[RMDB]
RNA sequence: GGGAACGACUCGAGUAGAGUCGAAAACUGCUCUAGGCCAGAGCGAAUCAAGUCUGACACCAAGCUGAGGUCCCGGGGCUGGGCAGCCACCCGGUCCCAUCACUGCACCCUGUCCUCACCCCACUGCAAUAUGGCUCAAGUUCGCUUGAGCCAUAUUAAAAGAAACAACAACAACAAC
Reactivity to DMS in 0.01 (KOAc 150mM, MgCl2 10mM, bicine 150mM(pH8.5), 24C), signal-to-noise 2, nucleotides 027 to 126: c070u000g020c010u000c040u010a080g020g020c060c170a120g020a040g010c010g000a070a100u010c120a090a120g020u010c050u000g000a070c080a110c030c030a070a120g010c080u000g010a090g010g010u000c050c050c040g030g000g020g010c000u000g010g020g030c030a080g010c140c140a190c010c000c000g010g000u000c000c010c000a080u000c030a090c060u010g020c020a070c050c030c020u000g010u010c030c020u000c030a180c050c000c010c040a110c150u000g000c230
Source: RMDB library OK2TST, as collected in RNAgym. The record gives the reactivity of an RNA of 177 nucleotides to DMS. Conditions: 150 mM KOAc, 10 mM MgCl2 and 150 mM bicine (pH 8.5), 24 C.